This 177-nucleotide RNA was probed chemically with 2A3 and DMS. Reactivities are given for positions 27 through 126. For 2A3, 7,796 sequencing reads were counted. The DMS profile rests on 5,399 reads.

RNA sequence: GGGAACGACUCGAGUAGAGUCGAAAAGAUAUGGACCUACCGAACGAAGAACUAGCUCCCCACCUUCUCAGAGAUCGGAAACGAUCUCUGAGAAGAGGCUAGGGAGUUCCGGGUAGGUCCUAAGUCACGUUCAAUAUAGGUUCGCCUAUAUUGAACGAAAAGAAACAACAACAACAAC
Reactivity to 2A3 in 0.01 (KOAc 150mM, MgCl2 10mM, bicine 150mM(pH8.5), 24C), signal-to-noise 2, nucleotides 027 to 126: g030a010u040a000u060g010g000a000c000c000u000a000c000c010g010a030a020c050g260a300a090g000a030a010c010u010a000g010c000u190c040c020c000c000a110c010c000u010u000c010u000c000a020g020a010g010a010u010c000g030g030a020a000a010c010g000a020u030c010u030c010u010g000a000g000a000a000g000a000g000g020c000u010a000g030g000g000a030g010u000u050c120c120g300g000g000u010a000g000g000u000c010c000u010a000a000g000u010c010a010
Reactivity to DMS in 0.01 (KOAc 150mM, MgCl2 10mM, bicine 150mM(pH8.5), 24C), signal-to-noise 4, nucleotides 027 to 126: g010a020u000a070u020g000g000a020c010c000u000a020c000c000g000a030a040c020g000a090a210g000a160a230c000u000a010g010c010u000c040c020c020c020a300c250c010u000u000c000u000c000a010g010a020g010a010u000c000g030g000a030a010a040c000g010a010u000c000u000c000u000g000a010g010a000a000g000a080g020g010c020u000a010g000g000g010a020g020u000u000c070c220g070g030g020u000a010g000g010u000c000c000u000a010a060g000u000c010a300